[RMDB]
RNA sequence: GGGAACGACUCGAGUAGAGUCGAAAAGAUCCUGUUAAGUGAGGCAGGCAUUCACUGACAAGAAGAACAUUUAAAUUUCGGCAAAUGAGUUCAUUAGUAUUCACAAAGCUUUGCACCCCUCAUGUUCGGAUUCUAAAGGAUUCGUCCUUUAGAAUCCAAAAGAAACAACAACAACAAC
Reactivity to 2A3 in 0.01 (KOAc 150mM, MgCl2 10mM, bicine 150mM(pH8.5), 24C), signal-to-noise 8, nucleotides 027 to 126: g060a060u040c010c000u010g030u060u110a120a060g010u030g030a040g020g030c100a070g050g010c030a090u040u050c020a020c030u020g040a020c040a040a030g100a050a020g040a070a020c020a040u080u100u240a170a190a120u120u130u090c010g070g000c040a030a070a110u100g030a050g060u030u020c020a020u040u070a030g100u070a080u050u080c010a010c040a090a110a020g010c030u020u050u150g020c010a070c000c010c000c010u030c030a040u040g050u070u080c050
Reactivity to DMS in 0.01 (KOAc 150mM, MgCl2 10mM, bicine 150mM(pH8.5), 24C), signal-to-noise 6, nucleotides 027 to 126: g010a100u020c010c000u000g020u000u010a060a040g010u000g010a040g000g020c070a110g010g000c100a100u030u010c000a030c020u000g000a050c090a090a080g010a110a170g000a070a060c060a080u000u000u030a050a070a120u010u010u020c090g010g010c060a030a080a050u010g010a100g000u000u010c050a100u000u010a100g010u000a060u000u010c070a060c100a060a080a110g000c060u000u000u000g010c040a110c030c040c010c030u010c090a060u010g000u000u000c110